[RMDB]
RNA sequence: GGGAACGACUCGAGUAGAGUCGAAAAAAGUCACCCUCCUCGCAUCGCAAGUUCGUGCUUGCGACUUACACGUAGGGCGAGGGGUGGGCGAAAGUUGCCAUGAGACCGUAACUUGCGUAGUCAUUGAAAAACUACAAAGCCUUCGGGCUUUGUAGAACAACUUUAGCUCGUUCGCGAGCUAAAGUUGAAAAGAAACAACAACAACAAC
Reactivity to 2A3 in 0.01 (KOAc 150mM, MgCl2 10mM, bicine 150mM(pH8.5), 24C), signal-to-noise 2, nucleotides 027 to 156: a000a010g130u140c090a070c030c000c000u000c000c000u000c010g000c000a040u010c000g000c000a000a010g000u250u210c200g280u300g040c000u000u020g000c000g000a000c000u050u100a050c060a060c120g180u100a100g090g180g000c050g000a000g010g030g010g020u120g020g020g010c030g000a030a020a020g030u020u020g000c010c020a060u040g090a070g000a150c050c000g000u010a020a060c000u090u160g000c020g010u090a100g020u030c050a090u040u050g100a030a030a030a100a030c000u010a000c000a000a000a000g000c000c000u020u020c060g030g020g020c030u010u000u030g000u000a000g000a010a000
Chemical mapping of a 207-nucleotide RNA with 2A3. It was measured as part of the RMDB library M2RFPK. For 2A3 the reverse transcriptase was SuperScript II with manganese.